[RMDB]
RNA sequence: GGGAACGACUCGAGUAGAGUCGAAAAAUAGGAUUGAUAGGUCAAAUGGUAUUUCUAGUUCUAGGUCUUUGAGGAAUUGCCACACUGUCUUCCACAAUGGUUGAACUAAUUUACCUUCCCACCAACAGUGUAAAAGCAUUCCUAUUGCUCCACAGCACCUAGGAUCGAGGUUCGCCUCGAUCCUAGGAAAAGAAACAACAACAACAAC
Reactivity to 2A3 in 0.01 (KOAc 150mM, MgCl2 10mM, bicine 150mM(pH8.5), 24C), signal-to-noise 2, nucleotides 027 to 156: a010u020a010g000g000a010u010u140g010a010u100a070g130g060u170c130a080a060a100u110g000g000u020a160u060u020u000c150u000a080g020u020u050c100u020a110g180g110u070c020u060u000u000g040a090g090g010a040a020u300u150g060c070c000a140c020a030c110u090g060u030c000u050u000c040c020a090c050a070a110u120g040g040u060u130g010a030a010c040u000a090a090u090u090u010a030c000c000u030u130c010c010c010a000c060c010a030a040c060a030g080u100g040u130a060a050a000a090g020c000a020u000u060c000c000u000a090u070u040g010c000u010c030c010a090c020a050g060c040a030